[RMDB]
Conditions: 150 mM KOAc, 10 mM MgCl2 and 150 mM bicine (pH 8.5), 24 C. The record gives the reactivity of an RNA of 177 nucleotides to 2A3 and DMS. The 2A3 profile rests on 2,489 reads. The data come from the RNA Mapping Database (RMDB), library TTRDES. 2A3 adducts were read by reverse transcription with SuperScript II with manganese.
RNA sequence: GGGAACGACUCGAGUAGAGUCGAAAAGAUAUGGAUCAUACGCAAGGCGACCACUCGGAAACGAGUGGCGCUGAUGACCGUAUUGAUCCUAAGUCAAAAGGUGUGUUUCCUUCGGGAAACACACCAACCAACAAUUGUCGUUCGCGACAAUUGUUGGAAAAGAAACAACAACAACAAC
Reactivity to 2A3 in 0.01 (KOAc 150mM, MgCl2 10mM, bicine 150mM(pH8.5), 24C), signal-to-noise 1, nucleotides 027 to 126: g000a000u050a030u060g000g010a000u000c000a030u010a020c020g010c090a050a200g030g000c010g300a300c000c010a010c000u000c000g020g000a050a000a010c000g000a010g020u000g000g000c010g000c000u000g000a000u030g000a000c000c000g020u000a020u090u300g000a020u000c000c000u010a020a010g020u000c000a000a010a170a170g010g000u040g000u020g020u010u000u040c040c000u050u110c300g090g010g020a000a000a000c000a010c020a000c000c000a000a000
Reactivity to DMS in 0.01 (KOAc 150mM, MgCl2 10mM, bicine 150mM(pH8.5), 24C), signal-to-noise 1, nucleotides 027 to 126: g010a000u000a070u020g000g000a030u000c000a050u000a010c010g000c020a150a060g000g020c000g000a200c010c020a030c000u000c000g020g010a030a010a080c000g020a010g000u000g000g000c000g000c010u000g000a010u020g020a100c300c000g000u000a010u000u010g010a010u000c000c000u000a000a100g000u000c010a160a070a170a190g010g040u000g020u000g010u000u000u000c000c010u000u050c190g060g010g000a030a010a010c020a000c010a000c000c020a000a020